[RMDB]
RNA sequence: GGGAACGACUCGAGUAGAGUCGAAAAGAAAGUUCAAGCAAGCUAGCCGACAAAAAAGCAAACUUGACCACCAAGGAUAAAAGAGAUCUUAUCCAAGGAUGCAAAAGAUAAUCUCACUUUUGACACCAAAACAGGGAGUAGUUCGCUACUCCCUGAAUCAUGUUAGAGACUUCGGUCUCUAACAUGAAAAAGAAACAACAACAACAAC
Reactivity to 2A3 in 0.01 (KOAc 150mM, MgCl2 10mM, bicine 150mM(pH8.5), 24C), signal-to-noise 3, nucleotides 027 to 156: g070a000a080a000g030u150u080c030a000a010g020c010a030a040g020c040u050a020g040c080c070g100a110c180a060a100a000a080a020a000g030c050a080a060a020c000u050u040g020a000c030c000a020c030c030a060a050g010g000a010u010a020a020a040a010g160a010g010a030u050c030u030u010a000u000c020c010a020a020g020g000a060u050g000c010a000a030a020a010g010a010u090a120a100u120c030u010c080a040c040u050u000u050u010g070a120c060a040c080c050a020a070a070a110c000a020g000g020g000a000g000u000a000g000u010u050c130g030c090u000a010c000u020c060c010c000u000g000a000a010
Reactivity to DMS in 0.01 (KOAc 150mM, MgCl2 10mM, bicine 150mM(pH8.5), 24C), signal-to-noise 2, nucleotides 027 to 156: g010a150a060a110g020u010u000c040a100a150g030c010a010a130g000c010u010a300g000c000c010g010a170c120a030a190a080a080a190a020g000c000a010a120a040c020u020u020g010a110c070c020a150c010c000a010a280g000g010a010u000a010a000a030a060g000a220g000a140u000c030u000u000a010u000c010c010a010a270g010g020a080u000g020c000a020a010a020a030g020a110u020a020a080u000c040u000c020a100c000u010u010u000u000g000a100c030a080c010c020a000a040a080a100c000a020g000g000g000a010g020u000a020g000u000u030c280g000c000u000a060c010u000c020c000c010u000g000a010a030
Record summary
Chemical mapping of a 207-nucleotide RNA with 2A3 and DMS. For DMS the reverse transcriptase was MarathonRT. The reactions ran in a buffer of 150 mM KOAc, 10 mM MgCl2 and 150 mM bicine (pH 8.5), at 24 C. Source: RMDB library M2RFPK, as collected in RNAgym. The DMS profile rests on 2,838 reads.